Description: The record gives the reactivity of an RNA of 207 nucleotides to DMS and 2A3. Reactivities are given for positions 27 through 156. The RNA was probed in 150 mM KOAc, 10 mM MgCl2 and 150 mM bicine (pH 8.5) at 24 C.
RNA sequence: GGGAACGACUCGAGUAGAGUCGAAAAAGAAUUCAGGAAUGAUUUCAGUAAUUCCAUCCCAAACACACACAGGCAAAGGGAGUGAAGAUUUCUUCAGCAACAUGGUGGCAGAAAGAUCAUGAAAAGAUCUAGGCCAGUCCAAGCUCACUGCAGUUAAUAUAGCUCCAGUAUUCGUACUGGAGCUAUAAAAAGAAACAACAACAACAAC
Reactivity to DMS in 0.01 (KOAc 150mM, MgCl2 10mM, bicine 150mM(pH8.5), 24C), signal-to-noise 2, nucleotides 027 to 156: a130g010a070a080u010u010c020a110g000g010a110a080u000g010a140u000u000u000c080a220g020u000a090a070u000u000c000c000a170u010c000c000c000a140a080a100c080a100c090a080c070a070c060a050g040g010c050a070a130a110g000g000g000a080g000u000g000a050a080g010a130u000u020u000c010u000u000c070a080g050c030a010a040c020a060u000g030g050u000g010g030c030a070g010a100a050a040g000a010u010c010a060u000g010a070a100a110a170g000a050u000c020u000a150g030g000c030c020a080g000u000c010c030a060a170g050c010u000c060a070c060u000g010c010a100g010u000u000a030a190
Reactivity to 2A3 in 0.01 (KOAc 150mM, MgCl2 10mM, bicine 150mM(pH8.5), 24C), signal-to-noise 2, nucleotides 027 to 156: a000g040a020a030u180u050c070a030g100g050a080a070u050g020a060u060u180u110c050a040g060u140a020a030u010u010c000c000a010u000c000c000c000a080a090a010c130a000c010a000c000a020c010a000g070g000c030a060a090a070g020g000g010a030g030u100g020a050a000g040a050u030u080u060c040u040u030c020a070g000c020a030a000c010a150u070g040g000u000g040g000c010a000g100a060a130a000g010a050u030c010a050u220g120a040a000a100a100g000a000u010c000u010a020g080g000c010c000a000g010u050c060c000a040a030g000c000u030c050a060c020u100g010c030a000g040u230u040a110a300
The 2A3 profile rests on 911 reads. For DMS the reverse transcriptase was MarathonRT.